[RMDB]
Structure probing data (DMS) for a 177-nucleotide construct. The reactions ran in a buffer of 150 mM KOAc, 10 mM MgCl2 and 150 mM bicine (pH 8.5), at 24 C. Source: RMDB library OK2TRN, as collected in RNAgym. High DMS reactivity at an A or C suggests that its Watson-Crick edge is free. For DMS the reverse transcriptase was MarathonRT.

RNA sequence: GGGAACGACUCGAGUAGAGUCGAAAAUCUGAUCCCGGGCCUUAAUGCUUUGUGGCCUUUAUGCAACUUUCAAAUCAAGGGUUCAGACCACAAGUUUUAUGACCCAGAGAACAGCUCAGGAGCUCCAUCAUCGAAUAACUUUCGAGUUAUUCGAUGAAAAAGAAACAACAACAACAAC
Reactivity to DMS in 0.01 (KOAc 150mM, MgCl2 10mM, bicine 150mM(pH8.5), 24C), signal-to-noise 3, nucleotides 027 to 126: u010c070u000g000a070u010c010c010c050g030g000g020c050c010u000u000a020a030u010g010c030u010u020u020g030u000g030g000c000c010u000u000u000a080u010g020c110a060a040c010u010u000u020c160a080a090a100u010c250a070a100g010g000g010u000u000c080a050g000a030c020c010a040c040a020a030g000u000u000u000u000a010u000g000a060c010c000c010a140g010a120g010a060a070c010a060g010c120u010c030a090g010g010a110g020c040u000c040c020a140